[RMDB]
RNA sequence: GGGAACGACUCGAGUAGAGUCGAAAAGAUAUGGAUUGAGGGAGCUCCUGGGUCGGAAACGACCUUGGAGCGACGAUCUCACUGUCCUAAGUCAAAACAUUAGUCCGUCUUCGGACGGACUAAUGAACGAUAAUAUAUUGUUCGCAAUAUAUUAUCGAAAAGAAACAACAACAACAAC
Reactivity to DMS in 0.01 (KOAc 150mM, MgCl2 10mM, bicine 150mM(pH8.5), 24C), signal-to-noise 1, nucleotides 027 to 126: g010a070u000a300u010g000g010a040u010u000g000a010g000g000g000a060g020c010u000c000c000u000g000g010g010u010c000g000g000a080a090a170c010g020a010c000c000u000u000g000g010a010g010c060g000a020c210g000a050u010c000u010c000a050c300u010g020u000c000c000u010a060a120g000u000c040a100a070a120a190c010a000u000u000a010g010u000c000c000g010u000c000u000u010c220g020g000a000c000g000g010a000c000u000a000a000u000g010a050a150
Reactivity to 2A3 in 0.01 (KOAc 150mM, MgCl2 10mM, bicine 150mM(pH8.5), 24C), signal-to-noise 3, nucleotides 027 to 126: g030a010u100a030u190g010g010a020u020u100g000a010g000g010g000a010g010c000u010c000c010u020g000g000g000u000c000g010g020a080a050a070c000g010a000c010c000u000u020g010g000a000g030c010g000a010c000g010a010u010c010u020c020a060c150u170g060u020c000c010u040a140a040g050u050c060a010a040a140a220c000a030u000u000a010g000u010c010c000g000u010c030u040u080c300g090g000a000c000g000g000a000c000u000a000a000u000g000a010a020